[RMDB]
RNA sequence: GGGAACGACUCGAGUAGAGUCGAAAAAAGUUCUUUCUACUAAUAUAAUGCAAGUACCUCGUGUUUUAGCGCAAGGCUCAGGUGGUACUGAAGUUGGAGAGGCUCUUAUUCCUGAACUUGAGUGCUCGGGCCAUGAUAGUUUCGACUAUCAUGGCCCAAAAGAAACAACAACAACAAC
Reactivity to 2A3 in 0.01 (KOAc 150mM, MgCl2 10mM, bicine 150mM(pH8.5), 24C), signal-to-noise 1, nucleotides 027 to 126: a010a000g090u120u190c030u000u000u000c000u040a150c040u130a270a150u100a180u130a240a000u230g070c100a070a000g070u000a000c000c000u070c190g010u070g160u210u170u230u210a000g070c150g000c030a130a000g270g000c010u010c000a010g240g000u000g070g000u030a000c000u000g060a000a000g060u000u040g030g000a000g000a000g000g000c000u000c000u160u200a220u000u090c000c000u000g010a120a000c000u010u130g160a120g010u130g000c090u030c020